An RNA of 177 nucleotides, treated with DMS and 2A3 and read out base by base. DMS adducts were read by reverse transcription with MarathonRT. 2A3 adducts were read by reverse transcription with SuperScript II with manganese. The data come from the RNA Mapping Database (RMDB), libraries RFM100 and RFMREP. The RNA was probed in 150 mM KOAc, 10 mM MgCl2 and 150 mM bicine (pH 8.5) at 24 C.
RNA sequence: GGGAACGACUCGAGUAGAGUCGAAAAUGACGACUACCAUGUUAAUGACGGUGCGGUUUCUUAUGGAGGGCUGAACAAGUCCGCCAUGACUUGCUGGUUUGGACUGUGAGAGUGGUGGUUGGGUGUCGUCCCAAGUUGAAUUCGUUCAACUUGGGACAAAAGAAACAACAACAACAAC
Reactivity to DMS in 0.01 (KOAc 150mM, MgCl2 10mM, bicine 150mM(pH8.5), 24C), signal-to-noise 3, nucleotides 027 to 126: u030g000a070c030g010a020c010u010a040c000c000a070u020g000u020u030a080a130u020g010a080c040g020g030u000g010c080g000g000u000u000u000c150u010u000a010u010g010g000a060g030g000g020c010u000g000a100a060c210a100a010g000u000c000c000g000c010c010a000u000g000a040c080u020u020g000c040u010g010g000u000u020u010g010g010a040c000u000g000u010g010a070g010a130g010u000g000g010u000g010g010u010u000g010g020g010u000g000u030c130
Reactivity to 2A3 in 0.01 (KOAc 150mM, MgCl2 10mM, bicine 150mM(pH8.5), 24C), signal-to-noise 5, nucleotides 027 to 126: u170g040a000c010g010a010c010u030a010c010c010a030u060g030u120u160a190a100u150g080a020c050g010g010u060g050c040g010g010u030u070u040c030u080u080a030u020g010g010a040g010g020g000c010u030g030a080a030c110a150a020g000u000c000c000g000c010c000a010u020g010a050c050u030u070g010c010u040g010g070u080u110u160g100g030a050c020u030g030u040g060a030g010a020g080u060g020g020u020g010g010u000u030g020g020g010u040g040u060c050